[RMDB]
RNA sequence: GGGAACGACUCGAGUAGAGUCGAAAAUAUGAAUCUGACUACUGUAGGUACCUCAUAUGAGUGGAAUCAUAACAAUAUUUGUCCUUUUGUGUCUGGCUUAUUCCACUAAGCAGAACAUCAAGGUUCACGUUCAGUGAAUUUUCGAAUUCACUGAACGAAAAGAAACAACAACAACAAC
Reactivity to 2A3 in 0.01 (KOAc 150mM, MgCl2 10mM, bicine 150mM(pH8.5), 24C), signal-to-noise 6, nucleotides 027 to 126: u160a020u060g030a030a040u020c030u050g090a050c020u110a040c010u090g040u110a020g100g020u060a070c030c020u070c030a070u080a070u280g010a020g040u050g010g040a030a020u050c020a040u070a140a030c040a130a070u070a110u200u130u140g050u040c010c000u050u050u050u110g110u020g080u020c010u010g120g140c000u040u020a010u190u040c030c010a020c080u000a010a020g000c000a000g010a020a030c000a020u100c060a050a050g050g000u070u060c060a040
Reactivity to DMS in 0.01 (KOAc 150mM, MgCl2 10mM, bicine 150mM(pH8.5), 24C), signal-to-noise 5, nucleotides 027 to 126: u000a040u000g000a080a070u000c070u000g000a080c090u010a100c050u000g020u000a070g020g020u000a060c110c050u000c070a130u000a050u000g010a040g020u010g010g010a070a040u000c050a040u000a060a100c130a050a050u010a070u000u010u010g010u000c020c020u000u010u000u000g020u000g000u000c020u000g010g020c020u000u000a030u000u000c090c080a050c120u000a020a020g000c010a020g010a040a040c080a040u000c230a050a060g010g000u000u000c070a110